[RMDB]
RNA sequence: GGGAACGACUCGAGUAGAGUCGAAAAGCUAAGGAUGUCCUACAGGUACCCGCACGUAACCUUCAGAGAGUGUGGAUCUGAGUAGGAGACUGUGGUGCGCUGCUUUACAGACGUAGCCCAGUUUAAAUACACACGAUUUUUUCGAAAAUCGUGUGUAAAAAGAAACAACAACAACAAC
Reactivity to DMS in 0.01 (KOAc 150mM, MgCl2 10mM, bicine 150mM(pH8.5), 24C), signal-to-noise 7, nucleotides 027 to 126: g010c080u010a070a110g010g010a090u000g000u000c010c000u000a010c000a300g010g000u000a090c120c000c000g010c000a000c010g000u050a010a020c010c010u000u000c300a100g010a300g000a030g000u010g000u010g000g010a050u000c010u010g000a130g020u000a020g010g010a050g000a010c020u000g010u030g010g020u000g000c010g000c010u000g010c210u030u020u030a100c030a030g000a110c020g010u010a020g000c000c000c000a020g000u000u000u020a060a100a130
Reactivity to 2A3 in 0.01 (KOAc 150mM, MgCl2 10mM, bicine 150mM(pH8.5), 24C), signal-to-noise 5, nucleotides 027 to 126: g070c040u100a090a060g120g060a130u130g060u060c000c000u000a000c000a010g000g020u050a080c010c020c000g000c000a000c010g300u100a020a010c000c000u040u040c010a040g010a000g000a000g040u010g020u020g010g000a000u000c000u020g040a050g080u000a010g000g000a000g020a000c000u020g060u130g060g020u000g000c010g010c010u010g000c020u130u080u100a130c040a060g110a070c030g010u010a040g160c000c000c010a000g000u010u000u010a030a050a010
The record gives the reactivity of an RNA of 177 nucleotides to DMS and 2A3. The data come from the RNA Mapping Database (RMDB), libraries RFM100 and RFMREP. DMS (dimethyl sulfate) methylates the pairing face of unpaired adenines and cytosines. Values cover nucleotides 27 to 126. High 2A3 reactivity points to a flexible backbone, as in loops and unpaired stretches.